[RMDB]
Annotation:
Chemical mapping of a 177-nucleotide RNA with 2A3. Values cover nucleotides 27 to 126. The RNA was probed in 150 mM KOAc, 10 mM MgCl2 and 150 mM bicine (pH 8.5) at 24 C. The data come from the RNA Mapping Database (RMDB), library OK1LIB.

RNA sequence: GGGAACGACUCGAGUAGAGUCGAAAAUGCCGAAGUGAUUUUGUUUUCAUUAAAUGACGUCCUUCGUCACUAAUUUUCAUUAUCCGAUUUAAAUGGUUCAGCAUUAUUGUGCAGGUCAGAAUUUAAACAGUGACCGGUAGUUCGCUACCGGUCACUGAAAAGAAACAACAACAACAAC
Reactivity to 2A3 in 0.01 (KOAc 150mM, MgCl2 10mM, bicine 150mM(pH8.5), 24C), signal-to-noise 1, nucleotides 027 to 126: u080g000c000c000g000a000a000g060u000g040a020u000u020u000u000g080u070u080u040u140c140a170u000u300a040a000a000u050g000a000c000g010u120c000c000u080u080c000g080u060c000a000c000u050a120a050u000u010u000u010c020a020u040u070a160u150c000c000g000a000u060u060u060a300a290a060u220g120g000u070u040c000a060g000c050a050u040u040a060u020u300g000u000g020c000a000g010g020u000c000a000g050a020a000u070u070u060a120a060a060